[RMDB]
RNA sequence: GGGAACGACUCGAGUAGAGUCGAAAAGAAAAUCCCUAGCAUAGCAUAGCAUAGCAUAGCAUAGCAUAGCAUAGCAUAGCAUAGCAUAGCAUAGCAUAGCAUAGCAUAGCAUAGCAUACAAAAAAAAUCAAUGAUAGUUGUUCGCAACUAUCAUUGAAAAAGAAACAACAACAACAAC
Reactivity to DMS in 0.01 (KOAc 150mM, MgCl2 10mM, bicine 150mM(pH8.5), 24C), signal-to-noise 4, nucleotides 027 to 126: g010a080a090a100a140u000c000c000c010u010a110g010c070a060u010a060g010c020a040u010a080g000c040a000u000a080g020c020a000u010a090g020c040a060u000a070g010c060a040u000a090g010c040a050u000a070g000c030a100u000a060g010c040a040u000a080g030c030a050u000a060g020c040a050u000a070g020c050a040u010a050g010c030a030u000a030g020c070a050u010a060g010c030a040u000a050g020c030a050u030a030c120a030a000a000a040a060a040a090a100
Reactivity to 2A3 in 0.01 (KOAc 150mM, MgCl2 10mM, bicine 150mM(pH8.5), 24C), signal-to-noise 3, nucleotides 027 to 126: g070a020a090a010a050u020c010c000c000u010a020g020c030a080u050a040g020c000a050u030a030g000c000a000u060a020g020c000a000u040a010g010c010a040u070a040g010c000a030u050a030g000c020a030u050a020g010c020a040u040a020g020c010a030u040a020g000c010a030u040a030g010c010a020u040a020g000c000a020u070a020g000c010a020u060a040g010c010a040u050a030g000c010a020u030a040g000c010a030u090a090c100a080a020a030a010a000a000a000a090
This 177-nucleotide RNA was probed chemically with DMS and 2A3. It was measured as part of the RMDB library M2PK90. Conditions: 150 mM KOAc, 10 mM MgCl2 and 150 mM bicine (pH 8.5), 24 C.